[RMDB]
RNA sequence: GGGAACGACUCGAGUAGAGUCGAAAAGUUGGAUCGCCAGAUGAUUGGCUUUAAUGGCACGCAUUACUCUGAAAACUCCGACCGCACGACCUACCCGUUAUUGCAGGAUUGCGGUGUUGGCUGGCUGCAAAAAAUCCGCAAUGAAGCGCCGCAGCGCUCAUGUAACAAUUUUCGAAUUGUUACAUGAAAAAGAAACAACAACAACAAC
Reactivity to 2A3 in 0.01 (KOAc 150mM, MgCl2 10mM, bicine 150mM(pH8.5), 24C), signal-to-noise 6, nucleotides 027 to 156: g020u010u020g010g010a060u070c040g020c050c020a030g020a080u090g020a050u070u110g050g020c000u080u050u060a160a150u130g050g010c060a040c090g050c010a050u030u080a100c040u030c030u110g060a060a060a050a060c030u000c010c020g030a030c010c010g030c030a020c020g030a040c010c010u020a040c030c000c000g050u070u090a090u080u090g040c050a050g010g080a060u030u050g010c030g020g010u020g050u060u030g030g020c030u010g040g000c000u010g000c000a010a070a060a020a010a080u040c020c000g000c020a020a020u130g060a100a020g000c000g010c030c050g030c080a030g020c020g010c020
Reactivity to DMS in 0.01 (KOAc 150mM, MgCl2 10mM, bicine 150mM(pH8.5), 24C), signal-to-noise 4, nucleotides 027 to 156: g020u010u010g020g000a080u000c050g020c100c030a060g010a090u000g010a100u010u010g010g010c000u000u010u010a070a130u010g010g000c030a130c100g020c090a080u000u000a050c090u020c040u010g000a060a100a100a090c050u000c010c000g000a060c030c020g010c080a210c030g000a070c020c000u010a080c020c010c040g020u000u000a060u000u000g000c030a080g010g010a240u010u000g010c010g020g010u000g010u000u000g010g020c020u000g020g030c050u000g020c040a000a030a080a050a080a080u000c010c010g010c030a040a080u000g010a060a090g020c020g030c010c080g030c070a080g020c050g020c090
Structure probing data (2A3 and DMS) for a 207-nucleotide construct. The DMS profile rests on 15,460 reads. For 2A3 the reverse transcriptase was SuperScript II with manganese.